[RMDB]
RNA sequence: GGGAACGACUCGAGUAGAGUCGAAAACGUCGGAGGCAGCCAUAGCGCUUGCCAUUGCAAAUGGCAUUGCUCCUAACAUGACCUUGCUGCCUGCAGAGGAUGCUGACCGUCAUGUGUGCUCAUGCCUGGCAGCCUUCAUGAGGCGCCAGUGCACGAACCGAGGUAAAUAUUUCGAUAUUUACCUCGGAAAAGAAACAACAACAACAAC
Reactivity to 2A3 in 0.01 (KOAc 150mM, MgCl2 10mM, bicine 150mM(pH8.5), 24C), signal-to-noise 5, nucleotides 027 to 156: c070g070u060c050g010g070a010g040g000c020a010g010c030c020a170u100a070g060c050g000c060u010u020g000c020c010a010u020u140g130c070a110a100a090u000g000g010c000a020u020u200g000c010u080c040c030u040a050a010c010a050u060g070a070c030c060u050u080g010c000u030g020c010c030u030g000c020a050g030a050g150g030a040u070g020c040u040g030a060c020c020g020u020c020a030u040g060u010g030u080g040c050u030c060a060u080g000c000c000u000g000g020c040a060g010c010c010u100u080c080a180u300g090a000g000g000c010g000c000c010a040g030u070g060c010a000c040g020a030a010
Reactivity to DMS in 0.01 (KOAc 150mM, MgCl2 10mM, bicine 150mM(pH8.5), 24C), signal-to-noise 2, nucleotides 027 to 156: c020g060u010c060g030g030a300g040g000c000a070g040c010c070a110u020a110g000c130g010c090u000u000g040c010c020a070u000u000g030c190a080a100a110u010g000g000c000a040u010u000g010c020u000c040c030u020a100a080c070a100u000g010a050c010c020u020u000g020c020u010g000c040c010u000g010c040a110g020a150g000g010a130u000g020c050u000g010a160c080c060g000u000c000a100u000g030u000g000u000g010c080u010c020a040u010g020c010c010u000g030g020c030a090g090c000c010u000u000c190a130u020g000a030g030g030c000g010c000c020a030g000u000g010c000a020c060g000a060a190

This 207-nucleotide RNA was probed chemically with 2A3 and DMS. For 2A3 the reverse transcriptase was SuperScript II with manganese. The DMS profile rests on 4,960 reads. For DMS the reverse transcriptase was MarathonRT. Conditions: 150 mM KOAc, 10 mM MgCl2 and 150 mM bicine (pH 8.5), 24 C. The 2A3 profile rests on 3,704 reads.